[RMDB]
RNA sequence: GGGAACGACUCGAGUAGAGUCGAAAAGUACCGGAGAGGGAGCCUGAGAGAUUGCUCCCACGUCCAAGGACGGCAGCAGGCGCGAAAAUUGCCCACUCUUUGCAGGAGGCAGUUAUGAGACGUGAAGCCGAUCAUAAACUUUCGAGUUUAUGAUCGGAAAAGAAACAACAACAACAAC
Reactivity to 2A3 in 0.01 (KOAc 150mM, MgCl2 10mM, bicine 150mM(pH8.5), 24C), signal-to-noise 4, nucleotides 027 to 126: g070u050a080c010c010g020g050a110g030a030g010g000g000a010g010c000c090u170g060a060g010a020g020a200u040u190g000c000u000c000c020c010a010c010g020u000c000c000a060a010g090g010a030c020g010g020c000a010g020c010a020g040g040c030g000c000g070a070a050a000a070u070u040g050c030c010c000a140c010u030c000u070u210u230g020c070a010g000g040a050g010g030c010a000g000u020u040a110u210g080a070g000a030c030g000u060g080a020a010g020
Reactivity to DMS in 0.01 (KOAc 150mM, MgCl2 10mM, bicine 150mM(pH8.5), 24C), signal-to-noise 5, nucleotides 027 to 126: g000u010a100c040c000g030g020a140g010a140g020g010g000a020g010c010c130u000g010a170g000a090g020a170u040u010g010c010u000c010c010c000a030c070g000u000c030c040a120a100g020g010a060c070g020g000c020a040g000c060a040g000g000c010g000c040g020a070a040a030a050u000u030g010c000c010c180a160c010u000c020u010u020u020g020c130a030g000g000a270g000g000c000a020g000u000u010a060u010g000a160g000a060c020g020u010g000a120a110g000
Chemical mapping of a 177-nucleotide RNA with 2A3 and DMS. The RNA was probed in 150 mM KOAc, 10 mM MgCl2 and 150 mM bicine (pH 8.5) at 24 C. The data come from the RNA Mapping Database (RMDB), libraries RFM100 and RFMREP.